RNA sequence: GGGAACGACUCGAGUAGAGUCGAAAACGACAAGGGUGUAAAGAUCGCUUUUUUACUCGGCAUGAUACCACCGUUAUCGGGUCAACAGAGUAGUUGCAAAUGACAACAAUGCUCAGGGUUAUGCUCUAAAAGUUCGUACCCUUCGGGGUACGAACAAGGAGCAUGUAAAGUUCGCUUUACAUGCUCCAAAAGAAACAACAACAACAAC
Reactivity to 2A3 in 0.01 (KOAc 150mM, MgCl2 10mM, bicine 150mM(pH8.5), 24C), signal-to-noise 6, nucleotides 027 to 156: c040g060a020c040a080a070g050g030g020u060g040u130a120a080a020g050a090u090c030g040c070u060u020u040u010u040u060a090c040u040c020g000g000c010a020u080g010a010u040a080c010c010a020c020c010g080u080u070a060u110c050g000g010g010u030c020a000a030c040a040g030a010g010u080a010g010u040u020g020c040a090a200a250u140g050a120c000a030a000c020a040a140u100g000c010u010c050a020g040g010g010u080u060a070u140g020c010u020c020u080a090a130a010a020g000u000u000c000g000u000a000c000c010c000u000u010c070g050g000g000g000u000a000c000g000a000a000c000a000a000
Reactivity to DMS in 0.01 (KOAc 150mM, MgCl2 10mM, bicine 150mM(pH8.5), 24C), signal-to-noise 2, nucleotides 027 to 156: c010g030a060c020a110a050g020g000g070u000g000u010a070a100a180g000a070u000c040g040c030u000u000u000u000u000u000a070c080u000c030g030g000c020a060u000g030a090u000a070c020c020a110c020c000g000u000u000a040u000c110g020g000g010u010c010a050a100c070a130g000a050g020u010a080g080u000u000g010c020a070a120a170u000g010a140c020a070a030c020a060a050u000g000c010u010c020a060g010g000g000u000u000a110u010g000c030u020c060u010a060a040a060a200g010u000u010c010g010u000a020c000c000c000u000u000c300g070g000g050g030u000a000c000g000a000a000c000a020a090

The record gives the reactivity of an RNA of 207 nucleotides to 2A3 and DMS. High DMS reactivity at an A or C suggests that its Watson-Crick edge is free. The RNA was probed in 150 mM KOAc, 10 mM MgCl2 and 150 mM bicine (pH 8.5) at 24 C. It was measured as part of the RMDB library M2RFPK. The DMS profile rests on 4,776 reads. Values cover nucleotides 27 to 156. For DMS the reverse transcriptase was MarathonRT.